[RMDB]
RNA sequence: GGGAACGACUCGAGUAGAGUCGAAAAGGUGACAUCUUCGUACUUACCUCUCACUCUGUGGCUACCUUGACGGCGCCCACAAUUGUGAAUCAAGAGAGGUAUGUUAAAAUUACUGGGUUGUACCCAACAACAGGACGGUUCGCCGUCCUGAAAAGAAACAACAACAACAAC
Reactivity to 2A3 in 0.01 (KOAc 150mM, MgCl2 10mM, bicine 150mM(pH8.5), 24C), signal-to-noise 6, nucleotides 027 to 129: g040g020u030g050a040c030a110u050c040u150u050c070g030u010a030c010u010u010a010c000c000u000c000u000c010a030c020u020c030u030g000u000g000g000c010u080a110c030c000u050u150g140a080c160g020g010c030g020c040c070c020a020c010a040a160u130u080g020u040g100a060a140u180c110a200a020g020a000g000a000g010g010u000a010u000g000u010u070a080a090a050a040u080u040a040c020u010g000g020g000u010u040g010u100a200c000c000c000a010a030c030a030a000
Reactivity to DMS in 0.01 (KOAc 150mM, MgCl2 10mM, bicine 150mM(pH8.5), 24C), signal-to-noise 4, nucleotides 027 to 129: g000g060u060g040a120c000a110u030c000u030u050c000g070u020a070c000u060u000a040c000c020u010c020u010c040a170c110u050c070u040g010u030g020g060c070u000a200c090c020u010u030g030a070c210g050g000c270g030c250c010c010a010c020a060a130u080u040g030u070g050a040a040u100c150a070a140g010a000g020a010g050g020u030a030u010g010u010u040a010a110a110a080u000u000a010c080u040g000g000g000u000u000g020u080a020c000c000c000a110a000c230a150a110